[RMDB]
RNA sequence: GGGAACGACUCGAGUAGAGUCGAAAAUUGUGUCAUUUGAAUUCCAACAGCAAGUGGCACUAACUUUCGGGCAGUUGGAAUUCCUGGAAGUGACUCAGUGCUCCUAAUCUAAGUACUGAGUGAACGGUGCAACUAAGAUUAGGAGUUGUACCGUGUACGUGACGACUCUGUUCGCAGAGUCGUUACGAAAAGAAACAACAACAACAAC
Reactivity to DMS in 0.01 (KOAc 150mM, MgCl2 10mM, bicine 150mM(pH8.5), 24C), signal-to-noise 4, nucleotides 027 to 156: u000u000g020u000g020u000c010a030u000u000u010g010a120a150u000u010c110c120a100a140c150a210g010c030a040a040g040u000g000g010c000a050c010u010a040a030c010u000u000u000c030g040g010g040c130a110g020u000u000g000g000a150a130u000u000c000c020u000g030g020a090a110g020u000g010a060c010u010c000a030g010u000g000c000u000c030c040u000a130a160u010c160u010a040a050g030u000a020c020u010g000a050g020u000g000a060a030c020g010g010u000g000c000a010a030c000u000a110a120g010a270u000u010a110g020g010a060g020u000u000g030u000a020c010c010g010u000g010u000a060
Reactivity to 2A3 in 0.01 (KOAc 150mM, MgCl2 10mM, bicine 150mM(pH8.5), 24C), signal-to-noise 9, nucleotides 027 to 156: u130u090g000u000g000u000c000a000u010u000u010g120a140a120u270u090c120c070a060a040c040a110g080c000a010a010g000u000g000g000c010a000c010u030a050a020c000u000u020u020c010g000g000g000c050a130g010u080u140g120g080a130a140u130u030c000c000u000g010g010a020a010g010u020g070a020c000u000c010a000g000u000g010c000u050c010c050u140a150a130u070c040u080a060a010g010u010a010c000u000g000a000g000u030g010a010a010c000g000g000u000g000c000a000a000c000u050a110a050g180a300u180u220a110g180g020a020g020u000u000g000u000a010c000c000g000u000g000u030a030